[RMDB]
RNA sequence: GGGAACGACUCGAGUAGAGUCGAAAAACAGCUGUUUGUUUGCCACACGAGUCACGGUAUAGCCAGCCAAAGAUUCACCGGGAGGCACCCGGCACUGCAGCAUACUGAUAACAAAUAUAGCGUGUCCGAUAACCACUUACUUCGGUAAGUGGUUAUCAAAAGAAACAACAACAACAAC
Reactivity to DMS in 0.01 (KOAc 150mM, MgCl2 10mM, bicine 150mM(pH8.5), 24C), signal-to-noise 2, nucleotides 027 to 126: a080c030a120g020c030u000g000u010u000u000g010u010u010u000g040c050c030a090c070a050c120g000a060g000u000c070a140c130g000g010u000a030u000a110g000c040c050a100g000c060c050a060a110a080g000a110u010u010c100a100c000c010g000g000g010a100g000g030c070a060c000c000c000g000g020c030a040c040u000g030c040a060g000c080a050u000a120c100u010g000a060u000a030a050c090a040a040a040u000a080u000a070g020c020g010u000g000u000c060c070
Reactivity to 2A3 in 0.01 (KOAc 150mM, MgCl2 10mM, bicine 150mM(pH8.5), 24C), signal-to-noise 2, nucleotides 027 to 126: a000c020a030g020c020u050g040u080u040u040g020u050u040u090g090c050c010a050c040a030c090g030a030g040u060c010a000c110g010g000u030a020u050a120g030c000c000a020g020c060c000a110a100a010g070a010u080u070c010a010c020c000g020g050g000a100g120g100c030a050c010c010c010g050g000c030a010c020u060g030c000a000g020c000a000u020a050c070u090g060a080u070a120a000c040a010a070a000u160a020u080a040g050c090g070u060g010u000c060c020